[RMDB]
RNA sequence: GGGAACGACUCGAGUAGAGUCGAAAAAACUACCGCCUGGACAUGGAUAUCCAGGUGCGAGCAGGGCCCUGCCAUGGCUGUAGGGAGGCUAAGGGCCACAUGGGCUAUCACCCCUGGCUCUGGCUCCGGAGGAAUGUUUCUAGCCUUUGUGUCCUCCUCAACGUACAAUGUUCGCAUUGUACGUUGAAAAAGAAACAACAACAACAAC
Reactivity to 2A3 in 0.01 (KOAc 150mM, MgCl2 10mM, bicine 150mM(pH8.5), 24C), signal-to-noise 1, nucleotides 027 to 156: a000a010c050u080a090c010c000g000c000c000u010g020g000a050c010a250u270g160g000a140u300a070u220c010c000a020g030g000u040g030c060g030a010g040c070a030g000g020g040c000c000c020u070g020c040c000a030u180g070g000c030u010g050u030a060g000g030g040a070g100g000c000u110a140a130g010g010g000c060c000a010c020a090u060g020g000g000c050u150a070u280c070a090c000c030c020c000u000g050g000c010u000c000u010g060g000c000u000c050c040g040g000a000g000g010a040a040u150g000u000u010u040c020u050a090g000c020c000u020u060u110g080u030g010u000c000c000u000c000c000

The data come from the RNA Mapping Database (RMDB), library OK3TST.
Chemical mapping of a 207-nucleotide RNA with 2A3.
2A3 adducts were read by reverse transcription with SuperScript II with manganese.